[RMDB]
RNA sequence: GGGAACGACUCGAGUAGAGUCGAAAAGGGCACCUUCGACGCCCACCGGGGCAAGUACCCGCGUAUCCGCCUCGCCAUGACCGACCGCGACGUGGUAGGCCGCGCCGCGUCCCUCAUGGACUCCAAGAUCCGCCUCUCGCUCCACGUCGCCCCGGCGACCGUUCCCGACGUUCGCGUCGGGAACGGUAAAAGAAACAACAACAACAAC
Reactivity to 2A3 in 0.01 (KOAc 150mM, MgCl2 10mM, bicine 150mM(pH8.5), 24C), signal-to-noise 1, nucleotides 027 to 156: g030g000g000c100a160c080c070u250u270c120g100a080c160g020c000c000c000a010c040c000g010g010g010g000c100a120a020g050u060a200c000c000c040g000c040g000u020a060u020c000c000g020c020c020u000c040g020c000c000a030u070g030a100c030c040g010a120c030c190g000c000g020a000c000g000u000g000g000u030a070g170g090c020c000g030c000g000c030c060g000c030g020u000c040c020c000u050c030a080u100g010g010a050c010u050c040c050a090a030g020a170u030c010c000g000c000c020u010c070u100c050g050c070u040c000c000a040c040g040u030c020g010c000c000c000c000g040g000c000g020